[RMDB]
Chemical mapping of a 177-nucleotide RNA with DMS and 2A3. 2A3 adducts were read by reverse transcription with SuperScript II with manganese. The RNA was probed in 150 mM KOAc, 10 mM MgCl2 and 150 mM bicine (pH 8.5) at 24 C. For 2A3, 2,310 sequencing reads were counted. The DMS profile rests on 2,117 reads.
RNA sequence: GGGAACGACUCGAGUAGAGUCGAAAAGAUAUGGAAUUGUGGAGUAGGCUUCUACACUCGGAAACGAGUGUAAUAGCCGCGUUGAAACAAUUCCUAAGUCAAAGGAGGAUGCUUCGGCAUCCUCCAAUCGUUAUGUAUCCUUCGGGAUACAUAACGAAAAAGAAACAACAACAACAAC
Reactivity to DMS in 0.01 (KOAc 150mM, MgCl2 10mM, bicine 150mM(pH8.5), 24C), signal-to-noise 2, nucleotides 027 to 126: g000a020u000a300u000g010g000a000a000u000u000g000u020g010g010a120g030u000a080g040g000c000u010u000c090u000a010c000a000c010u000c000g000g000a140a140a210c000g010a030g010u000g000u000a000a050u000a010g000c000c000g000c040g020u010u000g000a290a120a030c010a020a000u000u000c000c000u000a020a090g010u000c030a050a120a180g010g000a000g000g010a010u000g020c000u010u010c220g020g010c010a000u000c000c000u000c000c000a010a000
Reactivity to 2A3 in 0.01 (KOAc 150mM, MgCl2 10mM, bicine 150mM(pH8.5), 24C), signal-to-noise 2, nucleotides 027 to 126: g000a000u050a030u190g000g020a000a010u010u020g010u000g020g080a090g090u170a210g150g010c020u060u000c030u050a000c010a000c000u010c010g060g080a090a080a050c000g010a030g020u030g010u000a000a000u030a010g010c000c040g010c010g020u130u120g000a050a000a000c000a000a010u000u020c000c000u010a100a010g080u060c010a070a120a220g010g000a010g020g000a000u010g010c020u070u110c300g130g000c000a010u000c010c000u000c000c000a000a010